The record gives the reactivity of an RNA of 177 nucleotides to DMS and 2A3.
RNA sequence: GGGAACGACUCGAGUAGAGUCGAAAAUUGUUCUAAGGAAAUCAUCCACGGUAGCAUAUGCAAAUCCCAACCAAGCAAUGCAACUGGAUUGCGUUUCAAGCAGCAGAGGAGAGGGAAGAGACGGAAGCAUGUAUGUUAGCUUCGGCUAACAUACAUGAAAAGAAACAACAACAACAAC
Reactivity to DMS in 0.01 (KOAc 150mM, MgCl2 10mM, bicine 150mM(pH8.5), 24C), signal-to-noise 8, nucleotides 027 to 126: u000u010g020u000u000c040u000a120a150g010g000a030a040a050u000c070a050u000c010c020a060c170g000g030u010a100g020c020a020u000a090u000g020c030a050a100a150u000c030c010c020a080a120c190c140a080a130g010c030a030a020u000g000c010a070a090c060u000g000g010a080u010u010g010c090g010u010u000u010c050a070a100g020c070a040g010c050a050g000a090g000g010a060g000a070g000g000g000a040a030g000a090g010a060c080g000g000a080a090g010
Reactivity to 2A3 in 0.01 (KOAc 150mM, MgCl2 10mM, bicine 150mM(pH8.5), 24C), signal-to-noise 4, nucleotides 027 to 126: u040u040g020u050u020c040u090a110a080g110g010a040a040a070u060c020a010u020c000c010a040c050g030g060u070a050g000c020a020u150a140u180g000c020a060a040a140u060c010c010c000a010a030c040c030a050a020g000c010a010a020u030g000c010a050a030c020u030g040g020a130u020u090g040c060g030u010u040u050c040a070a040g000c030a010g000c010a020g020a020g060g010a040g020a020g020g010g030a080a020g030a020g010a040c030g010g020a020a030g060
For DMS the reverse transcriptase was MarathonRT. Reactivities are given for positions 27 through 126.